Overview: Structure probing data (2A3 and DMS) for a 207-nucleotide construct. Values are in units of 0.01, from 0 to 300, in steps of 10. 2A3 adducts were read by reverse transcription with SuperScript II with manganese. The 2A3 profile rests on 2,638 reads. Conditions: 150 mM KOAc, 10 mM MgCl2 and 150 mM bicine (pH 8.5), 24 C. DMS adducts were read by reverse transcription with MarathonRT. The data come from the RNA Mapping Database (RMDB), library OK3TST.
[RMDB]
RNA sequence: GGGAACGACUCGAGUAGAGUCGAAAAGUACGCGAUCGAGAGUUUCGCCGAUCGGAUUCAGCACGUGAUGGGCCUGGCCGAUCACGUCGCUGAGUCAUCGCCGUUCCAGAAGUGGCUCGCCGAGAACGGCGCCGAGAUCGAGUUCGACGAGGCGGGCGGUCGGUAAAGAAUUCGUUCUUUACCGACCAAAAGAAACAACAACAACAAC
Reactivity to 2A3 in 0.01 (KOAc 150mM, MgCl2 10mM, bicine 150mM(pH8.5), 24C), signal-to-noise 3, nucleotides 027 to 156: g100u110a020c060g020c050g050a040u040c030g000a040g010a030g100u020u050u050c080g010c070c010g000a000u000c000g050g000a010u000u000c000a010g010c000a010c000g020u020g000a000u030g050g000g020c130c300u140g160g000c070c000g110a000u010c000a000c000g020u030c090g000c020u010g000a000g000u010c010a000u030c000g010c010c010g000u000u000c020c020a110g070a160a020g120u130g050g050c030u010c010g000c010c020g050a060g000a070a000c000g000g020c000g010c030c040g170a100g000a030u030c010g000a040g050u080u150c040g030a050c070g010a030g010g010c020g000g010g010c000
Reactivity to DMS in 0.01 (KOAc 150mM, MgCl2 10mM, bicine 150mM(pH8.5), 24C), signal-to-noise 1, nucleotides 027 to 156: g000u000a020c060g000c060g010a080u010c040g020a110g030a290g010u000u010u010c020g030c030c000g000a000u000c020g000g010a050u000u010c020a010g050c000a030c040g010u020g020a030u000g000g010g020c000c100u010g020g030c030c010g010a030u010c000a000c000g000u000c070g060c010u010g000a060g010u000c000a140u000c020g050c010c000g060u000u000c000c000a120g000a150a130g010u000g050g070c020u000c010g070c000c010g040a120g000a030a040c010g010g000c000g050c030c040g010a160g000a090u000c030g000a160g010u010u010c010g000a080c010g020a080g000g020c030g000g000g080c060